[RMDB]
RNA sequence: GGGAACGACUCGAGUAGAGUCGAAAAGAUAUGGAGGGAGCUCGCAGGGACUAUUGCCUCGGAAACGAGGCAACGAAUCCUGAGGAGCUUUGAUCUCCUAAGUCAAACACGUUCUUCGGAACGUGAACUGGGUACAACGGUUCGCCGUUGUACCCAGAAAAGAAACAACAACAACAAC
Reactivity to DMS in 0.01 (KOAc 150mM, MgCl2 10mM, bicine 150mM(pH8.5), 24C), signal-to-noise 1, nucleotides 027 to 126: g000a060u020a300u000g000g010a030g000g030g000a020g040c000u000c000g000c080a300g000g040g020a100c050u000a140u000u000g000c000c000u000c020g030g000a100a060a240c000g050a010g000g010c050a000a000c030g000a120a050u000c000c010u000g000a130g010g010a020g030c000u000u010u000g010a050u000c000u000c000c000u020a040a140g020u000c050a150a150a180c010a010c000g010u000u000c000u020u020c200g020g000a000a020c000g020u000g000a020a210